Structure probing data (DMS and 2A3) for a 170-nucleotide construct.
Source: RMDB library 15KLIB, as collected in RNAgym.
RNA sequence: GGGAACGACUCGAGUAGAGUCGAAAAUUCCGUUACAGUUAAAGAGACUGUUGUUCAGUUUAAUUAUCGUAGAGACGGUCAACCAUUCUACGAGCGGUUUCCCCUCUGCGCUUUUACAAAUCUAGAUAUACUUUUCACUUCGGUGAAAAGAAAAGAAACAACAACAACAAC
Reactivity to DMS in 0.01 (KOAc 150mM, MgCl2 10mM, bicine 150mM(pH8.5), 24C), signal-to-noise 5, nucleotides 027 to 129: u040u000c000c010g030u040u070a040c170a030g020u030u070a000a030a030g020a030g040a100c050u000g040u020u080g040u000u000c100a230g010u010u010u020a000a060u020u030a060u010c030g030u010a020g020a070g030a050c210g020g050u090c050a080a050c060c000a150u070u000c040u030a100c140g010a000g000c100g000g000u000u000u020c020c000c060c030u050c030u050g020c100g000c100u010u110u040u000a040c150a050a080a060u010c070u070a010g050a160u000a070u030a100
Reactivity to 2A3 in 0.01 (KOAc 150mM, MgCl2 10mM, bicine 150mM(pH8.5), 24C), signal-to-noise 3, nucleotides 027 to 129: u020u000c020c010g050u050u100a030c040a000g010u090u090a180a110a000g200a000g000a010c020u000g060u160u040g070u130u210c040a080g020u000u010u120a140a190u050u110a060u050c020g000u000a000g000a000g020a080c140g010g080u070c060a050a060c030c000a010u090u020c000u030a000c110g020a040g030c030g000g000u000u010u050c000c000c040c010u000c000u030g010c070g040c000u070u080u050u040a080c070a020a160a040u110c020u060a020g030a010u010a020u070a190
Conditions: 150 mM KOAc, 10 mM MgCl2 and 150 mM bicine (pH 8.5), 24 C. Reactivities are rounded to 0.1 and cut off at 0 and 3.